[RMDB]
RNA sequence: GGGAACGACUCGAGUAGAGUCGAAAAACGGGCAGUGGCGAUGGCAACGCGGCAGCCGCAGGGUCGACUUCUUCGCAGCCGCAACAGACGGGAUACGGGCAAAGAGGGGUACUCGUUCUGUUGGAAGGGUAUGAUAAAAUUUCGAUUUUAUCAUACCAAAAGAAACAACAACAACAAC
Reactivity to 2A3 in 0.01 (KOAc 150mM, MgCl2 10mM, bicine 150mM(pH8.5), 24C), signal-to-noise 9, nucleotides 027 to 126: a000c040g010g030g000c030a050g020u050g070g010c030g050a090u070g050g010c030a060a030c060g000c000g060g000c020a020g040c020c010g010c030a030g030g010g020u060c020g030a060c020u060u020c000u040u040c060g000c040a030g030c010c020g010c010a010a010c010a010g030a010c010g010g000g020a020u050a090c020g030g050g010c070a070a110a020g070a060g020g050g000g000u020a030c010u010c020g060u160u030c020u020g010u010u010g020g030a060a060g120
Reactivity to DMS in 0.01 (KOAc 150mM, MgCl2 10mM, bicine 150mM(pH8.5), 24C), signal-to-noise 7, nucleotides 027 to 126: a100c090g000g000g000c050a050g020u010g010g020c050g000a080u030g000g020c060a080a080c130g010c040g010g010c070a110g000c060c030g010c060a060g010g000g000u010c040g000a070c080u020u010c040u000u000c060g020c070a090g000c030c020g000c040a050a030c040a020g000a040c010g000g000g010a130u000a040c030g010g010g010c090a070a090a100g010a110g000g000g020g030u000a040c010u020c010g000u010u020c020u000g000u010u000g000g010a090a090g010
This 177-nucleotide RNA was probed chemically with 2A3 and DMS. Conditions: 150 mM KOAc, 10 mM MgCl2 and 150 mM bicine (pH 8.5), 24 C. The 2A3 profile rests on 76,599 reads. The data come from the RNA Mapping Database (RMDB), library OK1LIB.